[RMDB]
RNA sequence: GGGAACGACUCGAGUAGAGUCGAAAAAUACAAGGGGAGGUUUCGGCCAAAUGUUGUAUGCAGAAAGCGUGAGGAAGCUAGCACUUAGACACUCACGAGUAGCGGUUCGGCAGUAGUGCUAAAAUGAGACAGUACGAAAAGUUCGCUUUUCGUACAACUGUGAAUUAUUGUUCGCAAUAAUUCACAGAAAAGAAACAACAACAACAAC
Reactivity to DMS in 0.01 (KOAc 150mM, MgCl2 10mM, bicine 150mM(pH8.5), 24C), signal-to-noise 3, nucleotides 027 to 156: a090u010a090c060a080a040g020g000g010g010a110g020g010u000u000u000c050g030g000c020c050a060a090a090u000g030u000u000g010u000a060u010g020c010a110g000a100a080a090g020c020g010u000g010a060g010g010a120a090g000c030u000a080g020c050a060c030u010u000a170g020a100c050a140c020u000c030a040c030g000a100g000u000a080g000c020g000g020u000u010c050g010g020c040a110g020u000a040g030u000g010c000u000a040a090a060a070u010g010a160g010a120c070a110g020u000a000c000g010a010a010a010a030g030u000u000c300g000c010u000u010u000u000c010g010u000a000c000a020a050
Reactivity to 2A3 in 0.01 (KOAc 150mM, MgCl2 10mM, bicine 150mM(pH8.5), 24C), signal-to-noise 5, nucleotides 027 to 156: a000u170a030c040a050a090g000g010g010g010a050g020g030u030u050u080c060g050g000c030c000a070a100a040u090g010u050u030g020u050a040u070g010c020a010g110a090a090a010g050c010g010u020g010a010g010g030a120a030g020c010u030a010g030c040a020c100u050u040a020g040a060c030a010c060u020c010a000c010g020a020g040u050a010g010c040g010g070u090u070c040g060g000c020a020g020u120a010g020u010g020c020u050a040a060a030a040u100g000a020g030a050c060a100g010u000a000c000g010a000a000a000a000g010u030u040c120g020c090u000u000u000u000c000g000u000a000c000a000a010